Structure probing data (DMS and 2A3) for a 177-nucleotide construct.
[RMDB]
RNA sequence: GGGAACGACUCGAGUAGAGUCGAAAAUCGUUAUGGAUACGCGUAUCGGUAUUCUUCAGCACCUGUUCAAUGAUCCGCUCCAUCGGGCUGUCGCCAUUUUCCGUGAAGUAGCGGGUAAUGGUCGGGAACUCAUCCAGUAUUUCGAUACUGGAUGAGUAAAAGAAACAACAACAACAAC
Reactivity to DMS in 0.01 (KOAc 150mM, MgCl2 10mM, bicine 150mM(pH8.5), 24C), signal-to-noise 5, nucleotides 027 to 126: u000c050g020u010u000a070u000g010g010a100u000a040c100g030c090g020u000a050u000c030g020g000u010a090u000u000c030u000u010c080a100g010c110a110c050c020u000g000u010u000c060a060a060u000g000a070u000c020c040g010c030u000c030c020a110u000c040g010g000g000c130u000g010u010c100g010c040c040a040u000u000u010u010c010c010g020u000g010a120a160g010u010a130g010c000g010g000g010u000a010a040u000g010g010u010c050g010g000g000a120
Reactivity to 2A3 in 0.01 (KOAc 150mM, MgCl2 10mM, bicine 150mM(pH8.5), 24C), signal-to-noise 5, nucleotides 027 to 126: u060c020g010u060u060a080u160g060g020a070u090a170c100g010c030g190u080a060u110c040g040g030u020a060u050u030c000u100u100c020a020g010c030a060c050c010u040g040u110u070c050a060a040u150g010a040u050c020c010g020c030u030c020c000a050u050c020g020g030g000c040u070g060u170c060g010c050c000a020u060u050u070u020c000c010g020u010g060a100a040g090u200a010g020c000g000g010g000u020a020a010u030g020g030u040c050g000g000g050a030
Conditions: 150 mM KOAc, 10 mM MgCl2 and 150 mM bicine (pH 8.5), 24 C. Values cover nucleotides 27 to 126.